RNA sequence: GGGAACGACUCGAGUAGAGUCGAAAACGAGUGGCUGAAAUGAGCGAGCGUUUUAAGCUCAACGACGUUGAAGAUGUUCUGCCGGAGUCAUUGCCGCUCGGCAUUCGCCAGCGGCUUUCGCUGGCGGGGAGAGAAACAAUUUCGAUUGUUUCUCUCCAAAAGAAACAACAACAACAAC
Reactivity to 2A3 in 0.01 (KOAc 150mM, MgCl2 10mM, bicine 150mM(pH8.5), 24C), signal-to-noise 3, nucleotides 027 to 126: c010g000a010g000u010g020g000c030u080g070a030a070a060u140g010a080g070c070g010a030g020c010g010u010u060u090u260a090a010g020c000u010c060a040a000c060g190a010c060g020u030u070g030a050a030g060a100u120g060u120u030c040u190g020c030c010g070g020a060g050u010c010a030u010u130g000c010c000g000c000u010c000g010g010c020a040u220u180c010g000c000c000a010g000c030g060g060c040u060u130u050c010g000c000u000g000g010c000g000g020
Reactivity to DMS in 0.01 (KOAc 150mM, MgCl2 10mM, bicine 150mM(pH8.5), 24C), signal-to-noise 5, nucleotides 027 to 126: c010g000a040g020u000g000g030c010u000g010a080a080a060u000g010a100g030c100g000a050g010c040g010u010u000u000u020a100a170g000c040u000c030a120a120c120g010a080c150g000u000u010g000a060a080g000a060u010g010u000u000c020u030g030c010c020g010g010a180g010u000c020a040u000u010g010c010c000g020c010u000c030g000g010c200a110u010u010c030g000c000c000a010g010c000g010g000c300u000u010u000c010g020c010u000g000g000c010g010g000
Source: RMDB library OK2TST, as collected in RNAgym. Chemical mapping of a 177-nucleotide RNA with 2A3 and DMS. For 2A3 the reverse transcriptase was SuperScript II with manganese. High 2A3 reactivity points to a flexible backbone, as in loops and unpaired stretches. For DMS the reverse transcriptase was MarathonRT. Reactivities are given for positions 27 through 126.